[RMDB]
RNA sequence: GGGAACGACUCGAGUAGAGUCGAAAAGGUGGUGAGUUGCGGUGUUGUCUACCGUAGAGGAUUUCUCUCGUGCCUUGUUACGGGUUUGAAGGGCGAGCCUAUCUUCGGAGGGUAAAUUGUAACUUUCAUAGCAGAGUUAGUUCGCUAACUCUGCUAUAAAAGAAACAACAACAACAAC
Reactivity to DMS in 0.01 (KOAc 150mM, MgCl2 10mM, bicine 150mM(pH8.5), 24C), signal-to-noise 3, nucleotides 027 to 126: g000g010u000g010g000u010g000a070g000u010u020g010c060g030g010u000g000u000u030g010u010c060u000a100c040c030g020u020a130g010a070g000g000a140u020u020u020c050u010c000u000c070g010u010g010c000c020u000u040g020u030u010a090c130g010g000g000u010u030u020g010a090a080g020g000g000c070g020a080g000c170c050u020a060u010c070u000u010c070g000g010a210g000g010g000u000a020a050a150u010u000g000u010a060a160c020u010u000u000c060
Reactivity to 2A3 in 0.01 (KOAc 150mM, MgCl2 10mM, bicine 150mM(pH8.5), 24C), signal-to-noise 2, nucleotides 027 to 126: g040g010u010g000g010u050g020a050g050u060u080g030c000g050g000u040g030u070u180g040u120c070u090a130c000c020g020u000a000g000a020g050g040a160u000u150u000c130u020c000u000c060g040u040g160c000c000u040u030g040u100u050a020c040g000g040g020u030u070u140g120a050a030g050g000g010c010g010a000g000c030c010u070a110u080c010u040u040c040g070g050a060g010g020g030u100a080a110a120u030u020g020u000a010a020c000u010u000u050c000
Structure probing data (DMS and 2A3) for a 177-nucleotide construct. As a SHAPE reagent, 2A3 marks flexible, mostly unpaired nucleotides at the ribose 2'-OH. For DMS the reverse transcriptase was MarathonRT. Conditions: 150 mM KOAc, 10 mM MgCl2 and 150 mM bicine (pH 8.5), 24 C.